[RMDB]
RNA sequence: GGGAACGACUCGAGUAGAGUCGAAAACAACAAUUACAUGUGCGUUAAGUGUCAUUGGAACGGGAAGUUGUCCAUUGAACGAAAAAUGAAUUUAUUUCAUUUGCGGUGCAUGUAUCGCAAAACAAAACAGCUAGCUACUGUUCGCAGUAGCUAGCUGAAAAGAAACAACAACAACAAC
Reactivity to 2A3 in 0.01 (KOAc 150mM, MgCl2 10mM, bicine 150mM(pH8.5), 24C), signal-to-noise 3, nucleotides 027 to 126: c070a010a010c040a030a060u190u030a000c000a030u000g000u010g030c020g030u060u150a110a110g060u020g030u060c000a000u000u000g000g000a090a080c060g040g090g110a150a160g040u140u070g020u060c010c000a000u000u010g070a050a010c030g040a000a060a000a000a000u010g000a010a040u120u130u210a150u010u170u000c000a000u000u000u030g000c000g090g050u010g010c010a000u000g000u000a020u070c080g120c150a030a070a130a090c060a040a100a050a000
Reactivity to DMS in 0.01 (KOAc 150mM, MgCl2 10mM, bicine 150mM(pH8.5), 24C), signal-to-noise 2, nucleotides 027 to 126: c070a100a050c210a120a070u020u000a000c000a010u000g000u000g020c010g030u000u010a110a210g000u040g050u000c000a000u000u020g000g000a020a050c000g020g060g020a110a220g000u000u010g010u000c060c000a010u000u000g030a000a010c050g000a000a040a000a000a000u000g000a000a030u010u000u000a070u130u000u000c000a000u000u000u000g020c080g000g000u000g000c040a000u000g030u000a010u020c300g000c140a140a080a070a260c290a080a110a050a150